[RMDB]
RNA sequence: GGGAACGACUCGAGUAGAGUCGAAAAGACUUAUGUUUGAACAUAACUGUCAGUGAUCUAAUUUUUGAGCACACCAGACCGACAUUGACGUUGUUCAAGGAUGUAAGUGAUGGUGGGGAGAAAUUAAGUUCAUGCUCAUGUUCGCAUGAGCAUGAACAAAAGAAACAACAACAACAAC
Reactivity to 2A3 in 0.01 (KOAc 150mM, MgCl2 10mM, bicine 150mM(pH8.5), 24C), signal-to-noise 1, nucleotides 027 to 126: g030a020c010u020u020a000u020g100u000u070u090g030a010a020c020a030u130a140a120c060u100g010u040c000a030g030u020g110a300u060c030u060a080a140u070u150u090u080u130g100a020g010c010a050c000a010c140c050a020g050a070c000c020g000a010c030a040u000u000g000a010c060g030u060u080g030u020u080c030a010a010g150g000a040u120g040u080a020a030g000u010g050a060u000g000g080u000g000g000g030g000a040g010a050a080a030u110u110a100a000
Reactivity to DMS in 0.01 (KOAc 150mM, MgCl2 10mM, bicine 150mM(pH8.5), 24C), signal-to-noise 2, nucleotides 027 to 126: g020a020c040u000u000a010u010g000u000u000u000g000a030a050c030a040u000a060a090c080u000g050u000c000a020g010u000g000a090u000c020u080a070a160u000u000u000u020u040g000a120g010c120a050c090a050c110c040a100g000a100c300c150g010a030c030a020u000u000g000a030c030g010u000u000g040u000u000c010a040a100g000g000a060u020g030u000a010a010g020u000g000a100u000g000g020u000g000g000g000g010a180g020a060a010a080u010u000a060a060

The record gives the reactivity of an RNA of 177 nucleotides to 2A3 and DMS. The DMS profile rests on 1,104 reads. The RNA was probed in 150 mM KOAc, 10 mM MgCl2 and 150 mM bicine (pH 8.5) at 24 C. DMS (dimethyl sulfate) methylates the pairing face of unpaired adenines and cytosines.